Chemical mapping of a 177-nucleotide RNA with 2A3 and DMS. For DMS the reverse transcriptase was MarathonRT. For DMS, 1,247 sequencing reads were counted. Source: RMDB library RFM100, as collected in RNAgym. The 2A3 profile rests on 1,334 reads.

RNA sequence: GGGAACGACUCGAGUAGAGUCGAAAAUGUAUGACAGUAUUUGAAGGAAUUUCCCUUAUGUUGACGUUUGGGCUUCUGAUCGUUGCAAUGCUGUCAUUUCACAACCACAAAAAAUAAUCCACCCUUGCAUGAUGAAGCUCUUCGGAGCUUCAUCAUGAAAAGAAACAACAACAACAAC
Reactivity to 2A3 in 0.01 (KOAc 150mM, MgCl2 10mM, bicine 150mM(pH8.5), 24C), signal-to-noise 3, nucleotides 027 to 126: u100g010u030a010u000g000a000c010a010g010u010a040u120u210u170g110a120a070g090g020a140a090u070u080u130c010c000c000u030u030a140u080g090u080u120g040a040c060g000u000u030u030g040g010g030c040u130u080c000u140g040a090u070c060g020u010u090g000c020a000a010u000g000c010u000g000u000c000a000u030u070u070c040a020c030a040a100c000c050a070c070a060a070a010a060a030a010u170a010a060u060c050c020a050c000c020c020u030u070g000
Reactivity to DMS in 0.01 (KOAc 150mM, MgCl2 10mM, bicine 150mM(pH8.5), 24C), signal-to-noise 2, nucleotides 027 to 126: u000g010u000a030u000g000a030c040a020g040u000a010u000u030u000g000a010a080g000g000a100a260u040u060u010c040c000c000u130u060a090u000g000u030u040g000a060c120g010u000u000u000g000g000g000c300u090u000c000u000g000a080u000c090g040u000u010g000c060a030a030u000g040c000u010g040u000c010a000u010u070u000c050a020c060a080a170c100c040a150c270a030a000a130a080a040a300u060a030a050u040c050c040a030c000c080c060u040u080g000